[RMDB]
RNA sequence: GGGAACGACUCGAGUAGAGUCGAAAAGAGUAUGGAUCAAAAAACUACCUAUUGGGUUCUAUGCUUAUCACAUGGGUAAGGAAAUAAUCUGAUCCCCAAACCCCCGAGACACUCAAUUUACCUAUAUAACAAACCUGCACAUGUACCUCUGAACCUAAUGGUUCUAUACUUUCGAGUAUAGAACCAUAAAAGAAACAACAACAACAAC
Reactivity to 2A3 in 0.01 (KOAc 150mM, MgCl2 10mM, bicine 150mM(pH8.5), 24C), signal-to-noise 2, nucleotides 027 to 156: g040a000g020u070a080u140g050g010a050u140c100a020a120a110a030a040a040c020u050a050c020c010u030a090u110u130g000g000g020u060u040c060u060a160u210g040c030u200u070a040u200c020a030c010a160u030g040g010g000u030a040a090g030g010a120a060a080u100a020a070u100c030u030g010a050u110c010c000c000c020a050a250a210c030c010c000c010c060g050a020g040a030c100a000c020u020c000a070a050u030u040u070a030c000c050u060a050u020a050u050a190a140c060a090a090a030c000c030u020g000c050a000c020a050u060g020u050a010c000c050u020c090u010g030a040a050c000c000u000a030
Reactivity to DMS in 0.01 (KOAc 150mM, MgCl2 10mM, bicine 150mM(pH8.5), 24C), signal-to-noise 1, nucleotides 027 to 156: g020a180g000u000a100u020g030g000a090u020c010a010a100a170a090a060a120c040u000a040c030c010u000a130u000u000g010g000g030u040u030c010u000a140u020g030c040u060u000a040u000c110a070c070a010u010g010g000g000u000a040a050g030g020a080a090a100u010a030a110u030c010u000g020a110u020c010c000c060c020a030a180a300c040c000c000c010c020g000a050g010a110c050a010c030u000c070a010a200u010u010u000a110c010c010u000a140u000a160u010a040a050c030a080a090a100c030c010u020g020c040a080c040a040u000g030u000a060c020c020u000c040u010g000a040a110c010c020u030a110